[RMDB]
RNA sequence: GGGAACGACUCGAGUAGAGUCGAAAAGGGCAGAUCGCUUGAGCCCAGGAGUUCGAGACCAGUCUGGGCAACAUGGCGAAACCAUGUCGCUACAGAAAAAUACAAAAAUUAGCCGGGUGUGGCGGUGCAAGCCUGCGAUCCCAGCUACUUGGUGGGACGUAAAAUGGGGAUUCGUCCCCAUUUUACGAAAAGAAACAACAACAACAAC
Reactivity to DMS in 0.01 (KOAc 150mM, MgCl2 10mM, bicine 150mM(pH8.5), 24C), signal-to-noise 1, nucleotides 027 to 156: g010g010g010c080a110g020a090u010c010g020c000u000u000g020a190g000c050c010c000a090g010g010a100g020u010u000c060g010a250g010a080c060c020a190g030u000c000u010g000g000g000c000a010a060c020a080u010g060g060c020g020a060a080a300c000c000a070u010g030u000c040g010c010u000a130c030a120g000a010a060a160a080a070u000a080c060a040a060a030a130a080u010u000a100g030c020c000g000g030g030u010g020u000g010g040c030g010g030u010g020c080a070a150g010c020c010u000g020c100g010a110u010c010c010c020a070g010c010u000a020c060u000u000g000g010u010g000g000g010a170
Reactivity to 2A3 in 0.01 (KOAc 150mM, MgCl2 10mM, bicine 150mM(pH8.5), 24C), signal-to-noise 2, nucleotides 027 to 156: g020g020g010c030a010g010a110u020c010g000c020u040u060g050a020g000c010c000c000a000g010g010a050g020u130u180c150g020a050g040a110c050c020a020g070u000c010u000g020g000g000c010a000a010c070a010u080g000g030c070g070a020a000a000c020c000a050u030g030u000c040g030c070u040a070c020a010g180a040a100a000a020a030u150a030c050a070a070a050a060a070u070u070a030g030c000c000g000g030g000u050g010u020g030g000c010g010g000u000g010c050a080a060g000c010c030u040g000c000g010a030u060c000c000c000a020g020c050u100a100c030u040u020g050g000u070g000g030g060a020
Annotation: Chemical mapping of a 207-nucleotide RNA with DMS and 2A3. It was measured as part of the RMDB library OK3TST. For 2A3 the reverse transcriptase was SuperScript II with manganese.